This 177-nucleotide RNA was probed chemically with DMS and 2A3. 2A3 adducts were read by reverse transcription with SuperScript II with manganese. The data come from the RNA Mapping Database (RMDB), library OK1LIB. For DMS the reverse transcriptase was MarathonRT. The reactions ran in a buffer of 150 mM KOAc, 10 mM MgCl2 and 150 mM bicine (pH 8.5), at 24 C.

RNA sequence: GGGAACGACUCGAGUAGAGUCGAAAAGCGUUAUGUAUCGGCCUUCCCGAACGCAUUUAAUAGUGCGGAUGCCGUUGUUCGGAAAUAAACGAACAGGAAGUAAUAUACAUAUCGCGAAAGAAAGAAAGGGUUUACAAAUGUUCGCAUUUGUAAACCCAAAAGAAACAACAACAACAAC
Reactivity to DMS in 0.01 (KOAc 150mM, MgCl2 10mM, bicine 150mM(pH8.5), 24C), signal-to-noise 1, nucleotides 027 to 126: g010c010g000u010u000a000u000g020u000a000u000c020g030g000c190c250u020u000c000c000c060g050a090a140c000g020c000a000u000u000u010a090a170u010a040g010u000g000c010g000g010a010u010g010c000c010g030u030u000g040u020u000c000g000g000a150a080a140u020a090a160a120c000g000a000a050c000a100g000g030a030a130g020u070a090a070u040a070u000a000c000a000u000a000u000c000g000c000g000a020a120a090g000a160a100a060g000a030a080a090
Reactivity to 2A3 in 0.01 (KOAc 150mM, MgCl2 10mM, bicine 150mM(pH8.5), 24C), signal-to-noise 3, nucleotides 027 to 126: g000c000g000u000u000a000u000g010u000a020u010c070g010g000c010c010u020u000c000c000c000g000a070a010c000g020c010a000u000u050u090a250a210u170a040g040u010g020c000g010g010a060u190g050c020c010g050u070u010g000u000u030c000g000g140a040a290a080u290a040a200a000c000g000a000a000c000a000g000g020a060a000g020u080a020a170u060a000u000a130c000a000u000a000u040c010g000c010g040a000a060a040g080a020a040a010g130a060a120a070